[RMDB]
Background
Structure probing data (DMS) for a 177-nucleotide construct. The DMS profile rests on 1,279 reads. Reactivities are given for positions 27 through 126.
RNA sequence: GGGAACGACUCGAGUAGAGUCGAAAAGAUAUGGAAUUUGCAUCCCCCAGGCGAGGAUCUCGGAAACGAGGGAGCCUAUGUGAUUCCUAAGUCAAAACGCUAGGAUAGGUUCGCCUAUCCUAGCGAACUUAUUGGGUCUGUUCGCAGACCCAAUAAGAAAAGAAACAACAACAACAAC
Reactivity to DMS in 0.01 (KOAc 150mM, MgCl2 10mM, bicine 150mM(pH8.5), 24C), signal-to-noise 1, nucleotides 027 to 126: g020a090u000a230u000g010g000a010a020u000u000u010g060c030a070u000c050c000c000c090c130a020g000g020c020g010a030g000g000a010u040c000u000c000g000g000a100a060a160c000g000a020g020g010g000a030g040c000c010u000a000u000g020u000g010a000u000u010c000c000u000a100a230g000u010c100a110a080a140a130c030g020c000u000a000g010g000a020u000a010g000g000u010u020c260g000c020c000u010a010u000c000c000u000a000g000c000g000a000a030
The RNA was probed in 150 mM KOAc, 10 mM MgCl2 and 150 mM bicine (pH 8.5) at 24 C.